[RMDB]
RNA sequence: GGGAACGACUCGAGUAGAGUCGAAAACAGCUACGCAAUUGUCGCCGAAGUGGCACGUAAAGCGUGGUGUCACAAUUAUGCUACAGGUAGCAUAAUCUUGUCGGCUACUGCCGACACCGGCGUAGCCUCUAGCGAGCGGCUUCGGUCGUUCGCUAGAAAAAGAAACAACAACAACAAC
Reactivity to 2A3 in 0.01 (KOAc 150mM, MgCl2 10mM, bicine 150mM(pH8.5), 24C), signal-to-noise 9, nucleotides 027 to 126: c030a010g010c010u020a000c010g000c020a080a240u130u120g050u070c060g000c030c010g050a210a050g080u190g030g010c010a000c030g160u200a060a090a050g080c060g050u050g050g000u030g040u030c010a010c010a040a030u010u000a000u010g010c000u020a040c080a190g280g180u090a010g000c000a000u010a010a010u030c080u100u140g060u060c010g010g000c010u070a050c060u240g030c010c010g130a140c030a030c050c020g010g000c000g000u000a000g010c000c010
Reactivity to DMS in 0.01 (KOAc 150mM, MgCl2 10mM, bicine 150mM(pH8.5), 24C), signal-to-noise 9, nucleotides 027 to 126: c080a160g020c020u000a010c010g010c020a080a110u020u020g020u000c100g020c030c030g020a120a130g030u030g000g010c000a020c030g010u020a070a090a150g010c120g020u000g020g010u000g010u010c060a040c100a150a040u000u000a010u000g010c000u000a040c110a160g020g000u010a000g000c000a000u000a010a010u010c110u020u020g010u010c070g010g010c020u000a040c090u050g050c020c010g000a090c150a010c270c110g000g010c000g000u000a010g000c010c070